RNA sequence: GGGAACGACUCGAGUAGAGUCGAAAAGAUAUGGAUCUAGUGGAGGCAACAGCUCGGAAACGAGACAUGCCUACCACGGAUCCUAAGUCAAAAGAGAUGACCACAAGUUCGCUUGUGGUCAUCUCAAUCGAUAGGUUUACUUCGGUAAACCUAUCGAAAAAGAAACAACAACAACAAC
Reactivity to DMS in 0.01 (KOAc 150mM, MgCl2 10mM, bicine 150mM(pH8.5), 24C), signal-to-noise 3, nucleotides 027 to 126: g030a010u000a300u010g000g000a000u000c000u020a080g040u000g010g010a080g000g000c020a030a070c270a130g020c000u000c010g010g010a070a070a240c010g000a020g000a060c100a210u000g000c000c000u010a050c000c000a010c000g000g010a010u000c000c000u000a030a070g000u000c020a070a050a140a150g010a030g010a010u000g000a000c000c000a000c010a010a000g000u000u020c300g010c000u010u000g000u000g000g010u010c000a000u000c000u000c000a020a030
An RNA of 177 nucleotides, treated with DMS and read out base by base. Reactivities are given for positions 27 through 126. For DMS the reverse transcriptase was MarathonRT. Conditions: 150 mM KOAc, 10 mM MgCl2 and 150 mM bicine (pH 8.5), 24 C. The data come from the RNA Mapping Database (RMDB), library TTRDEL.